[RMDB]
RNA sequence: GGGAACGACUCGAGUAGAGUCGAAAAAGACGCUUUCAAGGUGUCUGGCGGGAUGCUGUUCACAGACUAAAUGAUGGUGGGUCCGCUCAUGGCGAGUGGGCUUAAGAUAUAGUCGGGUCGCUCUGGAAACAGGGCAGCGAAUCGCAGUACUUCACCGGCCUAUACCCCUCUUCGGAGGGGUAUAGGCAAAAGAAACAACAACAACAAC
Reactivity to 2A3 in 0.01 (KOAc 150mM, MgCl2 10mM, bicine 150mM(pH8.5), 24C), signal-to-noise 1, nucleotides 027 to 156: a010g020a000c000g040c000u000u140u080c170a100a150g020g000u030g000u030c010u000g000g070c000g000g000g000a010u020g000c000u000g030u060u110c070a070c040a220g050a030c030u050a070a060a020u220g080a080u070g090g130u070g040g000g000u000c020c000g040c010u000c030a090u110g260g080c200g050a020g000u000g000g030g090c000u000u070a000a000g040a000u050a020u060a090g000u000c000g000g000g000u000c050g000c010u010c000u010g010g010a040a050a050c000a010g000g010g000c000a020g020c010g000a010a010u020c070g010c000a000g070u060a000c050u030u030c040a090c040c000g000